Annotation: The data come from the RNA Mapping Database (RMDB), library TTRDES. Structure probing data (2A3 and DMS) for a 177-nucleotide construct. The RNA was probed in 150 mM KOAc, 10 mM MgCl2 and 150 mM bicine (pH 8.5) at 24 C. 2A3 adducts were read by reverse transcription with SuperScript II with manganese.
RNA sequence: GGGAACGACUCGAGUAGAGUCGAAAAGAUAUGGAGUUGACCUUCGAUAAGUCGUGGUCGGAAACGACCAUACGACUUUUGACGAAGACCAACUCCUAAGUCAAACCAAAUAGUUCGCUAUUUGGAACUACCAUCAAGUCUUCGGACUUGAUGGUAGAAAAGAAACAACAACAACAAC
Reactivity to 2A3 in 0.01 (KOAc 150mM, MgCl2 10mM, bicine 150mM(pH8.5), 24C), signal-to-noise 2, nucleotides 027 to 126: g020a020u070a040u100g000g000a030g000u020u000g020a050c020c020u010u010c020g170a220u050a300a010g010u020c000g000u020g000g000u000c000g020g000a050a040a020c020g010a000c020c000a010u150a060c030g010a010c000u060u080u050u240g300a170c070g000a000a000g000a030c010c000a010a010c000u010c000c000u020a010a000g010u010c030a120a080a110c010c000a010a000a000u030a010g020u050u070c300g000c220u020a010u040u000u010g000g020a040a070
Reactivity to DMS in 0.01 (KOAc 150mM, MgCl2 10mM, bicine 150mM(pH8.5), 24C), signal-to-noise 2, nucleotides 027 to 126: g000a020u010a280u010g000g000a010g010u000u000g000a060c030c000u000u000c010g000a110u010a020a000g030u010c010g020u000g020g010u010c000g000g000a070a070a100c000g020a020c000c000a060u000a030c090g020a010c000u000u000u010u020g020a180c110g000a010a010g000a030c020c010a000a010c000u000c000c000u000a010a050g010u030c000a120a160a230c010c000a010a030a000u000a010g020u000u030c300g020c000u000a010u010u000u000g000g000a170a240